[RMDB]
RNA sequence: GGGAACGACUCGAGUAGAGUCGAAAAGGGGUCAGCGACAUGGGUCAUUACAAGCAUCGAUCACCACUGAAGCCUCCACGGUGGUGGGAGCUUGUUUUGACCCAACAGCGCUGACGGAGGCACCCAAAAGGGCUAUGAAGUUCGCUUCAUAGCCCAAGGUAUCCUUCUACUUCGGUAGAAGGAUACCAAAAGAAACAACAACAACAAC
Reactivity to 2A3 in 0.01 (KOAc 150mM, MgCl2 10mM, bicine 150mM(pH8.5), 24C), signal-to-noise 1, nucleotides 027 to 156: g030g030g180g010u010c000a000g010c030g030a080c270a300u300g000g000g020u000c010a020u010u000a020c010a020a010g020c000a040u300c100g010a000u000c010a000c000c000a000c000u040g030a040a020g010c000c000u000c000c000a000c000g010g010u000g000g010u000g000g000g000a010g000c000u000u020g000u010u010u000u000g000a000c000c000c000a010a000c000a000g000c000g000c000u000g000a000c000g000g000a000g000g030c010a030c010c000c020a030a130a030a030g030g000g000c000u000a000u000g000a000a000g010u160u190c180g040c130u000u000c000a000u000a000g000c000c000c000a000a000